Structure probing data (2A3 and DMS) for a 177-nucleotide construct. The 2A3 profile rests on 737 reads. Values are in units of 0.01, from 0 to 300, in steps of 10. 2A3 adducts were read by reverse transcription with SuperScript II with manganese. The reactions ran in a buffer of 150 mM KOAc, 10 mM MgCl2 and 150 mM bicine (pH 8.5), at 24 C. The DMS profile rests on 1,496 reads. It was measured as part of the RMDB library OK2TST.
RNA sequence: GGGAACGACUCGAGUAGAGUCGAAAAUUAAUGAUGAUACGCGAUCCAUACAUGAUACUAUUUGCAUUGAUGACACCGACUGUGAUGAAACGCUUCUUAGAAGAUGGAUCUUUUACAAUUGCGGCGAAACACCUCUCACUUUCGAGUGAGAGGUGUUAAAAGAAACAACAACAACAAC
Reactivity to 2A3 in 0.01 (KOAc 150mM, MgCl2 10mM, bicine 150mM(pH8.5), 24C), signal-to-noise 1, nucleotides 027 to 126: u030u000a010a040u080g100a090u020g050a020u040a090c140g050c120g110a040u000c020c010a080u020a130c060a050u150g020a030u020a100c010u040a120u040u030u060g090c020a030u050u070g060a010u070g020a020c000a010c070c010g070a040c010u000g010u060g070a070u010g000a040a020a010c010g000c000u010u010c020u020u040a000g020a120a000g010a060u110g060g000a010u040c030u020u040u030u040a060c100a090a020u000u170g080c020g040g020c020g080a070
Reactivity to DMS in 0.01 (KOAc 150mM, MgCl2 10mM, bicine 150mM(pH8.5), 24C), signal-to-noise 2, nucleotides 027 to 126: u020u010a060a050u030g010a150u000g000a090u010a060c230g030c100g030a020u000c010c120a120u000a130c180a090u020g000a070u000a040c090u000a030u000u010u020g020c010a040u010u010g010a060u010g000a110c110a070c050c030g000a060c140u010g020u010g010a050u000g010a050a050a130c030g000c010u010u000c020u010u010a040g010a020a050g000a060u000g010g010a120u000c000u000u000u010u000a050c110a020a080u020u020g020c050g010g020c060g020a090